[RMDB]
The record gives the reactivity of an RNA of 177 nucleotides to 2A3 and DMS. Source: RMDB library OK1LIB, as collected in RNAgym. 2A3 adducts were read by reverse transcription with SuperScript II with manganese. DMS adducts were read by reverse transcription with MarathonRT. Conditions: 150 mM KOAc, 10 mM MgCl2 and 150 mM bicine (pH 8.5), 24 C.
RNA sequence: GGGAACGACUCGAGUAGAGUCGAAAACAAAACAGGGCAAAAUAAAGACUAGUUAAGUCCAAACUAGCAAAAGGCCAAAAGAAGGCCAAGCGUAGUGCAACUGAAGCAGUAAGCAAUUCAGUUAAAAACUGACCCUAUUAUUCGUAAUAGGGUCAGUAAAAGAAACAACAACAACAAC
Reactivity to 2A3 in 0.01 (KOAc 150mM, MgCl2 10mM, bicine 150mM(pH8.5), 24C), signal-to-noise 3, nucleotides 027 to 126: c050a000a070a010a000c010a010g000g050g030c030a160a000a000a120u200a160a170a000g010a060c010u010a000g030u030u070a170a030g010u020c010c020a010a010a010c010u000a000g010c000a020a130a000a020g000g000c040c000a140a200a000a000g140a040a040g000g000c000c020a040a010g020c020g100u150a060g110u040g050c010a030a000c000u010g000a010a000g120c070a080g140u300a210a000g050c000a060a040u030u000c000a000g000u030u080a020a230a050a000
Reactivity to DMS in 0.01 (KOAc 150mM, MgCl2 10mM, bicine 150mM(pH8.5), 24C), signal-to-noise 3, nucleotides 027 to 126: c010a110a110a070a170c080a030g000g000g000c030a140a110a100a070u040a070a060a100g000a160c010u010a010g000u000u000a030a060g030u000c050c060a050a060a010c000u000a010g000c050a150a050a050a060g000g010c020c020a040a160a100a140g010a200a090g020g020c020c020a050a050g000c110g040u020a030g000u040g000c100a020a010c010u070g010a000a050g030c030a150g030u040a030a100g000c010a070a060u000u000c000a000g000u000u020a030a100a050a100